[RMDB]
RNA sequence: GGGAACGACUCGAGUAGAGUCGAAAAGAAAGGCAGCCAGUGCAGCCCACGAAGCCAGUCGAUGCAUGCUUUUGCAUGCCGCCCACGACUGAGGGCAGCUGCGGCACUGAGGGCAGCUGCCGAAAGAGCAGGUAUAGUAUUUCGAUACUAUACCUGCAAAAGAAACAACAACAACAAC
Reactivity to 2A3 in 0.01 (KOAc 150mM, MgCl2 10mM, bicine 150mM(pH8.5), 24C), signal-to-noise 6, nucleotides 027 to 126: g090a030a120a020g020g000c010a000g020c010c020a020g000u010g030c020a030g040c030c050c010a050c100g110a050a010g090c040c010a000g000u010c020g040a020u210g000c010a010u010g000c000u190u250u230u300g000c020a000u010g000c010c020g030c000c010c000a030c010g030a000c010u030g030a120g050g070g000c000a010g000c030u050g000c010g030g000c030a010c060u070g030a190g050g060g000c010a010g000c000u000g000c010c000g000a010a030a000g070a020
Reactivity to DMS in 0.01 (KOAc 150mM, MgCl2 10mM, bicine 150mM(pH8.5), 24C), signal-to-noise 6, nucleotides 027 to 126: g010a090a100a120g010g000c020a030g010c020c010a050g020u000g030c010a150g010c050c030c030a120c140g000a130a140g010c120c000a020g000u000c010g000a150u010g000c000a000u000g010c010u000u010u000u010g000c000a010u000g010c000c290g000c040c030c050a300c040g010a030c020u000g000a160g010g000g000c000a070g000c060u000g020c070g000g010c040a060c050u000g010a120g000g000g000c090a060g000c000u000g010c000c000g000a030a060a100g010a190